[RMDB]
Structure probing data (DMS) for a 177-nucleotide construct.

RNA sequence: GGGAACGACUCGAGUAGAGUCGAAAAGGUUGAACACGCAAGAAGUUUCAAUGAAUAUUGAUGCUUUAAUGCCUUUCGUGGAUUCAAUGUUAAAAGAACGUGUUGAGGGUGUGAAACGUGUGAAUGAAUCAUGCCACUUCUUCGGAAGUGGCAUGAUAAAAGAAACAACAACAACAAC
Reactivity to DMS in 0.01 (KOAc 150mM, MgCl2 10mM, bicine 150mM(pH8.5), 24C), signal-to-noise 2, nucleotides 027 to 126: g020g030u010u000g020a080a060c020a040c050g000c030a040a140g050a120a030g000u000u010u000c010a000a030u000g000a160a120u010a030u000u000g010a020u000g020c000u000u010u000a170a080u020g000c100c040u000u020u000c050g010u000g030g010a170u000u000c070a000a110u000g000u010u010a080a040a040a120g010a040a050c080g020u000g010u010u000g000a020g000g010g000u000g010u000g010a040a070a110c060g000u000g000u000g000a130a060u020g010a090